[RMDB]
RNA sequence: GGGAACGACUCGAGUAGAGUCGAAAAGAUAUGGAGGAGGGUACCAACUUGGAUUUAUCGGAAACGAUUGUCAGUUGAUACCUCCUCCUAAGUCAAAGUAAGCGUAUUGUUCGCAAUACGCUUACAAGAUUUUGUAGGAGUUCGCUCCUACAAAAUCAAAAGAAACAACAACAACAAC
Reactivity to 2A3 in 0.01 (KOAc 150mM, MgCl2 10mM, bicine 150mM(pH8.5), 24C), signal-to-noise 2, nucleotides 027 to 126: g050a030u070a030u120g000g010a010g030g010a030g060g210g050u050a020c030c000a010a000c040u140u250g140g020a070u300u300u210a020u080c020g010g000a070a060a040c010g010a020u000u010g030u040c010a010g000u000u000g010a010u020a020c010c010u000c010c010u010c000c000u010a000a000g000u000c030a000a000a100g000u000a010a000g010c010g000u000a010u010u020g050u020u100c240g000c110a000a000u010a000c000g000c000u010u000a000c000a010a000
Reactivity to DMS in 0.01 (KOAc 150mM, MgCl2 10mM, bicine 150mM(pH8.5), 24C), signal-to-noise 2, nucleotides 027 to 126: g000a050u000a300u000g010g000a030g000g000a040g000g000g010u000a010c030c000a000a010c000u000u010g030g000a020u000u020u010a000u000c000g000g010a100a110a200c000g010a010u010u000g000u000c000a020g020u000u000g000a030u010a020c010c010u000c000c000u000c000c000u000a010a040g000u000c030a100a100a170g000u000a000a000g010c010g000u000a000u000u000g010u000u000c200g010c000a000a010u000a000c000g000c000u000u000a000c010a090a090
This 177-nucleotide RNA was probed chemically with 2A3 and DMS. Source: RMDB library TTRDEL, as collected in RNAgym. Conditions: 150 mM KOAc, 10 mM MgCl2 and 150 mM bicine (pH 8.5), 24 C.